This 177-nucleotide RNA was probed chemically with 2A3 and DMS.
2A3 adducts were read by reverse transcription with SuperScript II with manganese.
The DMS profile rests on 3,068 reads.
RNA sequence: GGGAACGACUCGAGUAGAGUCGAAAAGAAAGAAAGAAAAGACACUGAGUGAGAAUAAAACCAAUCGUAGUGUCGGUAAAGCGUAAUUUAAACAUUGCCAAUUCUCACAGCGAGAAAGACUCGCAAACAUGGGUAGGUGAUUCGUCACCUACCCAUGAAAAGAAACAACAACAACAAC
Reactivity to 2A3 in 0.01 (KOAc 150mM, MgCl2 10mM, bicine 150mM(pH8.5), 24C), signal-to-noise 4, nucleotides 027 to 126: g110a030a060a010g130a040a070a010g130a030a080a000a010g040a000c020a010c110u100g010a010g070u020g000a010g000a000a010u080a130a140a040a060c050c060a050a030u120c060g060u100a070g010u040g020u060c000g000g000u100a070a040a000g170c100g090u060a020a070u070u100u190a080a100a000c090a040u020u050g000c000c000a000a010u000u000c010u000c000a010c000a010g000c000g000a000g010a000a040a030g040a060c000u000c000g010c000a020a030a050
Reactivity to DMS in 0.01 (KOAc 150mM, MgCl2 10mM, bicine 150mM(pH8.5), 24C), signal-to-noise 3, nucleotides 027 to 126: g010a080a030a070g010a100a170a170g030a060a050a160a110g020a040c070a020c000u000g050a140g010u000g000a140g000a030a020u000a030a040a080a110c060c010a000a020u020c080g040u030a030g030u010g010u000c040g000g030u000a010a100a090g030c190g000u000a040a040u000u040u010a110a120a010c170a030u000u000g030c020c030a080a120u000u000c010u000c000a060c000a080g000c000g000a010g000a040a140a130g000a080c030u010c000g010c000a120a040a120

For DMS the reverse transcriptase was MarathonRT. The RNA was probed in 150 mM KOAc, 10 mM MgCl2 and 150 mM bicine (pH 8.5) at 24 C. Values cover nucleotides 27 to 126.